[RMDB]
RNA sequence: GGGAACGACUCGAGUAGAGUCGAAAAGGGAUUAGAACUUGAGUGAAGGUGGGCUGCUUGCAUCAGCCUAAUGUCGAGAAGUGCUUUCUUCGGAAAGUAACCCUCGAAACAAAUUCAUUUUUCCUCUCCAAUUCUGCACAAGAAAGUUGCAGAACCCCAGUGUCGUUUUGUUCGCAAAACGACACUGAAAAGAAACAACAACAACAAC
Reactivity to 2A3 in 0.01 (KOAc 150mM, MgCl2 10mM, bicine 150mM(pH8.5), 24C), signal-to-noise 2, nucleotides 027 to 156: g040g000g000a030u070u170a080g030a090a010c050u040u040g030a010g010u060g070a040a060g110g050u100g040g010g020c000u000g000c020u120u190g090c040a080u030c010a080g000c000c000u030a100a040u060g020u020c000g000a000g000a010a010g010u000g010c000u060u010u000c010u010u030c210g040g020a000a000a040g000u010a010a010c000c000c000u000c000g000a030a010a030c040a040a120a030u030u010c050a070u000u030u010u050u020c000c020u000c010u010c000c000a000a090u040u000c000u020g010c020a020c000a010a120g220a300a140a030g170u180u020g000c010a000g020a060a040c010c010c000